[RMDB]
RNA sequence: GGGAACGACUCGAGUAGAGUCGAAAAGAUAUGGAUACUAUAGGUCCAACAGCUUACUUCGGAAACGAAGUAAGACAUGGACCUAUACAUGUAUCCUAAGUCAAAAGUCCUCAGUUCGCUGAGGACAGAGAUGUAAUCUCUUCGGAGAUUACAUCUCAAAAGAAACAACAACAACAAC
Reactivity to DMS in 0.01 (KOAc 150mM, MgCl2 10mM, bicine 150mM(pH8.5), 24C), signal-to-noise 7, nucleotides 027 to 126: g010a050u000a300u010g010g000a010u000a010c010u010a020u000a000g010g010u000c000c000a070a060c300a190g000c000u000u000a000c000u000u000c000g000g000a120a080a200c000g010a030a010g000u000a010a000g000a020c080a190u010g010g010a000c000c000u000a000u000a010c300a100u010g010u000a000u000c000c000u000a020a110g000u000c040a100a080a150a130g020u000c000c000u000c000a010g010u000u020c290g020c010u000g000a020g000g010a000c000a010
Reactivity to 2A3 in 0.01 (KOAc 150mM, MgCl2 10mM, bicine 150mM(pH8.5), 24C), signal-to-noise 4, nucleotides 027 to 126: g040a010u080a030u160g020g000a010u010a020c040u040a010u010a050g020g000u010c020c040a160a020c090a150g050c010u000u000a000c000u010u000c000g020g010a090a070a050c010g000a010a000g000u000a000a010g010a010c030a020u160g000g000a000c000c000u000a000u010a000c000a020u130g010u000a000u000c000c010u000a110a020g060u030c030a030a040a100a200g010u010c000c000u000c000a010g020u040u110c270g020c160u010g010a000g010g000a010c000a000

This 177-nucleotide RNA was probed chemically with DMS and 2A3. The DMS profile rests on 8,094 reads. The RNA was probed in 150 mM KOAc, 10 mM MgCl2 and 150 mM bicine (pH 8.5) at 24 C. The 2A3 profile rests on 15,745 reads.